An RNA of 177 nucleotides, treated with DMS and 2A3 and read out base by base. The data come from the RNA Mapping Database (RMDB), library OK2TRN. 2A3 adducts were read by reverse transcription with SuperScript II with manganese.
RNA sequence: GGGAACGACUCGAGUAGAGUCGAAAACGGUAUUCGGAAUCUUGCACGCCCUCGCUCAAGCCUUCGUCACUCCAAACGUUUCGGCGAGAAGCAGGCCAUUAUCGCCGGCAUGGCGGCCGACGCGCUGCGCUCGAACCAUAUUCGUAUGGUUCGAGCGAAAAGAAACAACAACAACAAC
Reactivity to DMS in 0.01 (KOAc 150mM, MgCl2 10mM, bicine 150mM(pH8.5), 24C), signal-to-noise 1, nucleotides 027 to 126: c070g000g000u000a110u000u000c040g010g000a160a130u000c030u000u000g020c100a070c080g040c020c010c010u000c030g050c040u010c060a080a140g000c060c040u010u000c090g010u000c030a020c130u000c030c060a070a120a090c120g020u000u000u000c110g010g020c000g010a130g000a120a070g010c100a100g010g030c020c110a070u000u000a100u000c100g020c000c000g000g020c080a040u000g010g010c060g000g020c070c070g010a090c080g000c060g010c040u000g000
Reactivity to 2A3 in 0.01 (KOAc 150mM, MgCl2 10mM, bicine 150mM(pH8.5), 24C), signal-to-noise 1, nucleotides 027 to 126: c030g000g060u030a140u030u100c040g050g050a080a070u000c020u060u110g000c020a040c110g000c010c000c000u000c000g000c000u030c040a100a010g000c000c000u080u080c030g070u050c030a040c090u000c060c000a130a040a040c080g020u030u050u070c000g010g010c030g030a040g000a100a010g000c030a050g050g000c020c010a160u250u180a100u070c060g010c030c010g090g060c120a070u160g040g010c000g010g050c020c070g020a060c000g020c010g010c040u020g020